[RMDB]
RNA sequence: GGGAACGACUCGAGUAGAGUCGAAAAAGACUCGGCAUACGUGCCGAGUCAACCUGAUUCGUCAGGAUGAUAUGUGGGUGAAUACAGUCACUCGAAUCGAAACACGCCGCAGGUACGCCUGCGGCGAUGUGAAAUGGCUAUUCGUAGCCAUUUCACAAAAAGAAACAACAACAACAAC
Reactivity to DMS in 0.01 (KOAc 150mM, MgCl2 10mM, bicine 150mM(pH8.5), 24C), signal-to-noise 2, nucleotides 027 to 126: a030g000a050c000u000c000g020g020c000a060u000a080c240g020u000g010c000c010g020a010g000u000c000a010a050c010c000u000g000a040u000u020c110g060u020c050a060g020g000a090u060g010a070u040a060u030g030u030g020g000g020u000g000a100a100u070a120c190a100g000u000c000a020c010u010c020g000a040a050u010c060g000a170a100a070c190a140c030g040c050c000g030c010a020g010g000u010a080c300g000c010c000u000g000c030g020g000c000g010a000
Reactivity to 2A3 in 0.01 (KOAc 150mM, MgCl2 10mM, bicine 150mM(pH8.5), 24C), signal-to-noise 5, nucleotides 027 to 126: a000g000a000c000u000c000g000g020c020a010u020a070c210g100u010g000c000c010g000a000g010u000c000a000a000c000c000u020g010a030u010u030c080g080u090c120a020g110g030a100u090g080a010u060a240u290g100u190g040g050g090u190g110a070a040u200a130c060a070g100u020c010a010c010u000c020g000a020a070u180c040g020a090a020a020c100a010c040g000c000c000g000c000a000g050g000u050a040c250g040c020c000u000g010c000g000g000c000g010a000

This 177-nucleotide RNA was probed chemically with DMS and 2A3.
For DMS the reverse transcriptase was MarathonRT.